Structure probing data (DMS) for a 177-nucleotide construct. Reactivities are given for positions 27 through 126. The data come from the RNA Mapping Database (RMDB), library TTRINS. Conditions: 150 mM KOAc, 10 mM MgCl2 and 150 mM bicine (pH 8.5), 24 C. Reactivities are rounded to 0.1 and cut off at 0 and 3.

RNA sequence: GGGAACGACUCGAGUAGAGUCGAAAAGAUAUGGACGCACUUCACGUUGAUACGCGAGGACGUUGAAAUGACUGUGUCGGAAACGACAUUCAUGGAGUCCUCAUCAACGUGAAGUGCGUCCUAAGUCCGUUUUACCGUACUUCGGUACGGUAAAACGAAAAGAAACAACAACAACAAC
Reactivity to DMS in 0.01 (KOAc 150mM, MgCl2 10mM, bicine 150mM(pH8.5), 24C), signal-to-noise 2, nucleotides 027 to 126: g020a080u030a300u020g000g000a000c000g000c030a020c000u000u000c010a000c000g030u020u000g010a010u000a120c300g050c260g020a030g020g050a010c010g020u010u020g000a120a070a020u000g000a030c300u020g000u010g010u010c000g050g000a110a120a240c040g000a010c000a010u010u000c020a000u000g000g000a060g000u000c010c000u000c010a050u000c000a000a000c010g010u010g000a010a000g000u000g000c000g030u000c000c010u000a000a110g000u000c020